The record gives the reactivity of an RNA of 177 nucleotides to DMS and 2A3.
For DMS, 2,649 sequencing reads were counted.
2A3 adducts were read by reverse transcription with SuperScript II with manganese.
RNA sequence: GGGAACGACUCGAGUAGAGUCGAAAACAAAAACGGAUUGUGUCUGUAAUCACAACAAACAAAAACAAAAGGAUUGUGUCCAUAAUCACAAAAACAAAACAAAAGGGAUUGUGUCCGUAAUCACAAAGCUAUAUGACGAUUUCGAUCGUCAUAUAGCAAAAGAAACAACAACAACAAC
Reactivity to DMS in 0.01 (KOAc 150mM, MgCl2 10mM, bicine 150mM(pH8.5), 24C), signal-to-noise 2, nucleotides 027 to 126: c070a000a070a110a130a130c160g010g000a110u040u030g000u000g000u020c060u030g000u020a170a030u030c030a060c060a020a000c260a150a000a060c180a010a050a010a130a020c130a110a090a110a170g000g020a010u040u000g000u000g010u010c050c050a040u000a020a030u030c010a000c060a000a050a020a130a080c300a040a000a040a030c270a030a020a080a090g000g000g010a090u000u000g000u000g000u000c070c000g000u000a030a050u010c080a030c120a020a060a190
Reactivity to 2A3 in 0.01 (KOAc 150mM, MgCl2 10mM, bicine 150mM(pH8.5), 24C), signal-to-noise 6, nucleotides 027 to 126: c050a000a130a020a010a000c070g070g020a100u070u030g030u020g030u050c130u120g170u180a080a090u130c010a000c010a040a020c030a010a170a050c070a050a120a050a000a010c080a050a130a020a010g100g050a080u020u010g000u000g010u040c030c020a040u090a050a080u070c020a020c050a090a030a040a040a000c080a080a100a000a010c070a030a160a010a030g060g020g010a010u000u020g000u000g030u030c030c060g100u080a000a040u110c020a000c030a080a030a000

Background: The reactions ran in a buffer of 150 mM KOAc, 10 mM MgCl2 and 150 mM bicine (pH 8.5), at 24 C.